RNA sequence: GGGAACGACUCGAGUAGAGUCGAAAAGAUAUGGAAUUCCAUAAAAAUGGUGAUGACCAGGCUCGGAAACGAGCCUGCAAGCCAUAAUAUGGAGAUUCCUAAGUCAAAAUCCUGCUUCGGCAGGAAAGUUAUAUCUUAGCUUCGGCUAAGAUAUAACAAAAGAAACAACAACAACAAC
Reactivity to 2A3 in 0.01 (KOAc 150mM, MgCl2 10mM, bicine 150mM(pH8.5), 24C), signal-to-noise 3, nucleotides 027 to 126: g020a020u080a080u120g000g000a020a020u030u020c010c000a010u030a040a120a040a070a010u050g000g050u050g020a300u140g010a150c080c010a000g010g000c010u000c000g010g000a020a120a080c000g000a010g000c000c000u000g000c000a020a030g000c010c000a020u020a050a030u010a020u000g010g020a120g060a110u000u000c010c000u020a140a010g060u010c010a020a010a020a300u020c000c000u010g000c000u030u070c170g180g000c000a000g010g000a040a000a010
Reactivity to DMS in 0.01 (KOAc 150mM, MgCl2 10mM, bicine 150mM(pH8.5), 24C), signal-to-noise 5, nucleotides 027 to 126: g010a050u000a300u000g020g000a020a010u000u000c010c000a010u000a000a030a160a160a040u000g020g010u000g000a110u010g000a250c300c020a010g000g030c010u020c000g000g000a140a080a190c010g000a020g010c000c000u010g010c020a030a190g000c020c000a010u010a060a300u000a010u000g000g000a040g000a040u000u000c000c000u000a060a140g010u010c050a120a110a200a140u000c000c000u010g000c000u000u010c220g010g020c000a010g000g000a010a010a050

An RNA of 177 nucleotides, treated with 2A3 and DMS and read out base by base. For DMS the reverse transcriptase was MarathonRT. Conditions: 150 mM KOAc, 10 mM MgCl2 and 150 mM bicine (pH 8.5), 24 C. The 2A3 profile rests on 8,869 reads.